[RMDB]
RNA sequence: GGGAACGACUCGAGUAGAGUCGAAAAGAUAUGGAAAGCAGAUGGCUCGUCAUCGAUCAGGACCCUCUUAAGUAUCGGAAACGAUACGGAGGAGCCUGGGAGACGAGCCAUCUGCUUUCCUAAGUCAGAACAAUACUACCUUCGGGUAGUAUUGUUCAAAAGAAACAACAACAACAAC
Reactivity to DMS in 0.01 (KOAc 150mM, MgCl2 10mM, bicine 150mM(pH8.5), 24C), signal-to-noise 1, nucleotides 027 to 126: g020a060u000a300u020g010g000a000a000a000g010c000a020g060a010u000g010g020c000u010c000g000u000c030a280u010c180g020a120u010c010a000g000g010a070c050c010c000u030c010u010u040a160a270g040u000a010u000c010g030g000a180a090a300c010g020a010u000a000c000g000g000a010g010g010a080g010c000c010u000g000g000g000a060g040a000c010g010a020g010c000c000a000u000c000u000g000c010u010u000u000c000c000u000a040a070g000u010c080a120